[RMDB]
RNA sequence: GGGAACGACUCGAGUAGAGUCGAAAAGGCGUUGCCGUGGCUCCUCGUUCGGAUCGGCUUUCCGCUGCCUUCCGCUGGAUGACGACGGGUUAUCCGGCGGUCGACGCACGGUCAUGCACCCCCGAUCCAUAAUUUUCAGGUUCGCCUGAAAAUUAUGAAAAGAAACAACAACAACAAC
Reactivity to 2A3 in 0.01 (KOAc 150mM, MgCl2 10mM, bicine 150mM(pH8.5), 24C), signal-to-noise 9, nucleotides 027 to 126: g060g000c160g100u100u190g020c010c010g020u040g020g000c010u010c010c000u020c020g040u050u050c040g020g040a110u040c040g040g000c000u020u030u010c030c020g050c150u030g000c000c000u010u000c000c000g000c010u010g000g000a010u010g010a000c060g070a100c150g300g120g000u010u010a010u000c000c000g000g000c000g000g000u010c010g020a030c060g000c010a010c010g000g010u020c040a060u190g010c010a090c000c000c000c000c010g000a020u020c010
Reactivity to DMS in 0.01 (KOAc 150mM, MgCl2 10mM, bicine 150mM(pH8.5), 24C), signal-to-noise 9, nucleotides 027 to 126: g010g010c040g020u010u010g010c020c020g000u010g010g000c040u000c020c020u000c050g020u010u000c060g010g000a050u010c040g010g010c060u000u010u010c010c020g020c220u010g010c010c010u000u000c000c000g020c010u000g000g000a010u000g000a010c010g020a190c250g020g010g010u000u000a010u000c000c000g010g010c000g000g010u000c020g000a080c150g020c020a060c030g000g000u010c070a040u020g010c060a260c050c030c020c030c020g000a050u010c040